[RMDB]
RNA sequence: GGGAACGACUCGAGUAGAGUCGAAAAGAAAGAAAGAAGAAUCACCAGGAGGCAAGGAUCCUCAACUACGUUAUUCGGGCACCUUGAGUUGAGAGGAGCUAGUGGUGCGCCCAGCCUGGAGAUCAAAACACGACAGGCGGGUUCGCCCGCCUGUCAAGGUAGAUACGCUGUUCGCAGCGUAUCUACCAAAAGAAACAACAACAACAAC
Reactivity to 2A3 in 0.01 (KOAc 150mM, MgCl2 10mM, bicine 150mM(pH8.5), 24C), signal-to-noise 2, nucleotides 027 to 156: g070a010a080a000g060a030a090a040g090a040a000g050a060a020u010c010a030c050c000a020g030g020a100g010g060c000a010a250g020g000a020u000c000c000u040c000a000a000c010u290a120c030g140u240u070a070u090u090c020g000g110g000c020a000c040c000u070u300g000a000g000u020u000g000a010g020a020g000g020a010g000c000u020a010g040u030g090g000u000g000c000g000c030c000c000a000g010c030c000u000g000g000a030g000a000u040c000a000a080a110a040c080a050c190g000a000c000a000g030g000c010g030g000g010u060u000c040g030c040c000c000g010c000c000u000g000u000c000a000a000